[RMDB]
RNA sequence: GGGAACGACUCGAGUAGAGUCGAAAAGAUAUGGAGCACAGCUAGUGGCAUGCUACCCACCUCUCAGGACCUUCGGAAACGAAGGUCCUGAGAGAGGCAUGACCACUUGGACCUGUGCUCCUAAGUCCUCAUUGAAACUGUUCGCAGUUUCAAUGAGAAAAGAAACAACAACAACAAC
Reactivity to DMS in 0.01 (KOAc 150mM, MgCl2 10mM, bicine 150mM(pH8.5), 24C), signal-to-noise 2, nucleotides 027 to 126: g010a110u000a240u020g000g000a000g020c000a000c000a020g020c020u000a030g030u010g010g000c010a000u000g000c000u010a110c080c040c120a300c070c000u010c000u000c010a000g000g000a020c010c000u000u050c010g010g000a110a110a210c000g020a010a000g000g000u020c000c000u010g000a000g000a010g020a060g030g020c000a000u000g010a180c010c000a010c010u000u030g010g000a160c300c000u020g000u010g000c000u000c000c000u000a010a110g020u020c080

This 177-nucleotide RNA was probed chemically with DMS. DMS adducts were read by reverse transcription with MarathonRT. Values cover nucleotides 27 to 126. For DMS, 1,463 sequencing reads were counted. Source: RMDB library TTRINS, as collected in RNAgym. Conditions: 150 mM KOAc, 10 mM MgCl2 and 150 mM bicine (pH 8.5), 24 C.